[RMDB]
RNA sequence: GGGAACGACUCGAGUAGAGUCGAAAAAAUUGUUAGUUUUCAUGGUGUUAGAGGGUUUUCAUAUGGAACAGGUGCCUGGAAGAGCUCACCUAGCUUCUCUGGUUAGGGCAGUCCUCAGGCCAGCAUUGCCUGAGAGCUGAUUAGAGAUGCAGAAUCACACUGCUUUUAUAUUCGUAUAAAAGCAGUGAAAAGAAACAACAACAACAAC
Reactivity to DMS in 0.01 (KOAc 150mM, MgCl2 10mM, bicine 150mM(pH8.5), 24C), signal-to-noise 1, nucleotides 027 to 156: a090a050u010u000g000u010u010a060g000u010u000u000u000c020a140u000g010g020u010g020u000u000a090g010a100g020g000g020u000u000u000u000c070a120u000a090u000g020g030a050a040c070a110g030g020u000g010c050c040u000g000g050a050a040g010a100g020c010u000c100a080c030c020u000a100g010c000u000u000c070u000c080u000g030g010u000u000a040g000g010g030c010a050g040u030c010c010u000c000a030g000g000c000c080a220g070c160a130u000u000g000c000c000u000g000a040g000a020g010c040u000g000a130u000u000a070g000a140g020a080u000g020c030a140g000a090a150u010c020a070
Reactivity to 2A3 in 0.01 (KOAc 150mM, MgCl2 10mM, bicine 150mM(pH8.5), 24C), signal-to-noise 3, nucleotides 027 to 156: a000a010u120u060g010u060u030a180g020u000u070u050u050c070a070u080g020g010u050g010u050u070a040g010a090g030g030g030u040u020u090u060c060a070u150a060u210g080g030a080a050c030a060g070g010u020g030c020c070u050g010g020a040a030g000a010g020c010u010c020a050c010c020u010a010g000c000u110u040c030u050c040u040g030g040u030u050a020g040g040g000c000a010g050u090c000c000u000c000a010g020g020c000c030a040g070c080a110u060u280g000c000c000u010g000a010g000a020g020c000u000g010a040u010u090a020g020a000g000a030u040g040c010a010g080a060a040u100c050a000